[RMDB]
RNA sequence: GGGAACGACUCGAGUAGAGUCGAAAACAGACUUCCACCGCGUGGCCAUCGCGGGUCCGCGCAGGCUCCAGCCGCUGCGCGUCGGCGCGGGCCUGGCGCUGCUGGCGGGCGUCGCGCUCGGCGGCGAUAGGCGUACCUAUUUCGAUAGGUACGCCUAAAAAGAAACAACAACAACAAC
Reactivity to DMS in 0.01 (KOAc 150mM, MgCl2 10mM, bicine 150mM(pH8.5), 24C), signal-to-noise 2, nucleotides 027 to 126: c120a150g020a140c130u000u010c040c010a170c040c030g000c020g010u010g020g000c040c050a070u000c170g010c230g000g000g000u020c020c020g010c020g020c070a050g030g020c080u000c040c070a140g000c030c040g010c030u000g030c090g010c070g010u020c030g010g000c010g000c040g020g020g000c010c010u000g010g010c030g010c140u010g010c060u000g000g010c010g000g000g050c020g030u000c010g020c020g030c020u000c010g000g050c000g000g020c030g000a090
Reactivity to 2A3 in 0.01 (KOAc 150mM, MgCl2 10mM, bicine 150mM(pH8.5), 24C), signal-to-noise 1, nucleotides 027 to 126: c030a030g170a110c080u080u020c020c010a070c030c050g040c000g040u030g030g050c060c010a090u090c130g000c130g180g000g000u040c050c000g000c000g050c060a120g030g010c030u030c030c030a030g000c030c020g130c030u050g000c000g010c000g100u130c040g020g000c020g000c040g040g060g010c020c010u000g010g000c190g000c160u110g000c010u010g100g000c050g110g060g000c000g020u060c030g000c010g000c020u040c050g050g000c000g000g000c000g050a070
The record gives the reactivity of an RNA of 177 nucleotides to DMS and 2A3. The 2A3 profile rests on 1,410 reads. It was measured as part of the RMDB library OK2TRN. 2A3 adducts were read by reverse transcription with SuperScript II with manganese.